[RMDB]
RNA sequence: GGGAACGACUCGAGUAGAGUCGAAAACUUCAUCUGACAACUCAGACAGUCUUUUAUCAAAUAGGCUUAUUUGAUCAUCACUAGAUGUGAACGCAUCAAUUGAUCCUUCAUACAAACAACUUAUGCAAGGAGCCUCUGUGUUCGCACAGAGGCUCCUAAAAGAAACAACAACAACAAC
Reactivity to 2A3 in 0.01 (KOAc 150mM, MgCl2 10mM, bicine 150mM(pH8.5), 24C), signal-to-noise 1, nucleotides 027 to 126: c000u130u110c000a060u000c000u120g000a080c070a110a090c030u070c080a120g000a130c010a000g080u060c000u030u230u300u300a260u080c140a150a150a000u130a090g010g000c070u210u050a000u090u030u010g040a040u000c030a000u010c000a050c070u070a010g010a300u000g000u000g000a160a030c000g000c050a100u070c000a050a200u050u040g000a000u000c050c050u000u030c000a010u070a140c140a000a100a050c010a000a000c000u300u050a070u120g070c000a020